[RMDB]
RNA sequence: GGGAACGACUCGAGUAGAGUCGAAAAUCGCUGAAUCUCAUGAGAAUUGAAAAAUGCUAUAAAAUCCACGCAAUUGCGUGGAUUUUUGUUUUCAUAGCGUCUCAUGUAAUCUUGCUACAGCGCAGCAUAAAUAUAGGACCUUCGGGUCCUAUAUUUAAAAAGAAACAACAACAACAAC
Reactivity to DMS in 0.01 (KOAc 150mM, MgCl2 10mM, bicine 150mM(pH8.5), 24C), signal-to-noise 2, nucleotides 027 to 126: u000c080g020c030u000g010a120a130u000c140u000c000a010u000g000a010g000a090a140u010u000g000a010a070a040a090a080u010g010c110u010a070u000a010a000a020a010u000c000c000a000c000g010c000a300a170u010u010g050c000g040u000g000g000a000u000u000u000u000u000g020u000u000u000u000c060a070u000a040g010c260g000u020c000u000c010a000u000g000u010a100a080u010c060u020u000g010c110u000a100c030a040g000c010g000c300a030g030c100a200